The data come from the RNA Mapping Database (RMDB), library 15KLIB. Chemical mapping of a 170-nucleotide RNA with 2A3 and DMS. For DMS, 23,913 sequencing reads were counted. For DMS the reverse transcriptase was MarathonRT. The RNA was probed in 150 mM KOAc, 10 mM MgCl2 and 150 mM bicine (pH 8.5) at 24 C. For 2A3, 23,021 sequencing reads were counted.
RNA sequence: GGGAACGACUCGAGUAGAGUCGAAAAGGAGGGCUCUUCAGUGACGCUCAAACAUUUUUUCUUUGCUCAAGAUGGUAAUGCUGCUAUUACAGAUUAUAAUUACUAUUCUUAUAAUCUGCCUACUAUGUAACCUACGUGUUCGCACGUAGGAAAAGAAACAACAACAACAAC
Reactivity to 2A3 in 0.01 (KOAc 150mM, MgCl2 10mM, bicine 150mM(pH8.5), 24C), signal-to-noise 9, nucleotides 027 to 129: g090g020a020g010g000g000c020u020c000u070u070c050a210g070u030g090a030c050g010c010u010c000a050a120a020c010a050u030u020u000u020u030u040c010u020u060u060g030c000u020c040a040a050g020a090u050g030g040u070a090a040u080g040c080u040g010c040u070a040u140u110a070c000a000g000a000u010u000a000u000a020a010u060u050a070c070u140a140u220u110c020u010u010a000u000a010a010u000c000u000g010c010c000u080a100c030u070a080u180g120u070a040a040
Reactivity to DMS in 0.01 (KOAc 150mM, MgCl2 10mM, bicine 150mM(pH8.5), 24C), signal-to-noise 6, nucleotides 027 to 129: g000g000a120g000g000g000c010u010c000u020u030c190a140g040u060g000a000c050g030c000u030c010a080a130a140c130a060u000u000u000u000u000u000c000u000u010u000g000c040u040c040a100a080g010a090u000g010g000u040a030a040u030g040c090u020g000c120u000a010u070u060a240c020a050g020a000u010u010a010u010a000a030u040u020a070c160u050a130u000u070c090u000u000a020u020a000a030u020c010u030g040c040c030u020a070c030u010a030u020g020u040a060a110